[RMDB]
Structure probing data (2A3) for a 177-nucleotide construct. For 2A3 the reverse transcriptase was SuperScript II with manganese.
RNA sequence: GGGAACGACUCGAGUAGAGUCGAAAACGAAUACGGGCUUCUGAUUCCAUGAAGAGCUUUUGCAAUUUAGAGUUUGAAAUGAAAUUGUGUUUCCGGAUUAUACUCCAAACAUAUUAUUAUAUGCAAUCUGAUUGGUAUUCUUCGGAAUACCAAUCAGAAAAGAAACAACAACAACAAC
Reactivity to 2A3 in 0.01 (KOAc 150mM, MgCl2 10mM, bicine 150mM(pH8.5), 24C), signal-to-noise 2, nucleotides 027 to 126: c040g000a010a000u080a070c020g000g000g070c030u110u080c010u170g020a070u050u060c060c000a040u080g030a020a060g060a060g020c000u040u120u090u170g060c050a080a060u040u120u180a130g010a020g120u050u080u060g080a080a100a030u090g050a000a030a120u060u020g000u000g010u070u050u060c040c010g020g000a010u070u090a010u200a150c020u000c030c020a010a080a080c000a010u010a000u020u100a050u160u010a040u050a010u080g040c000a000a070u000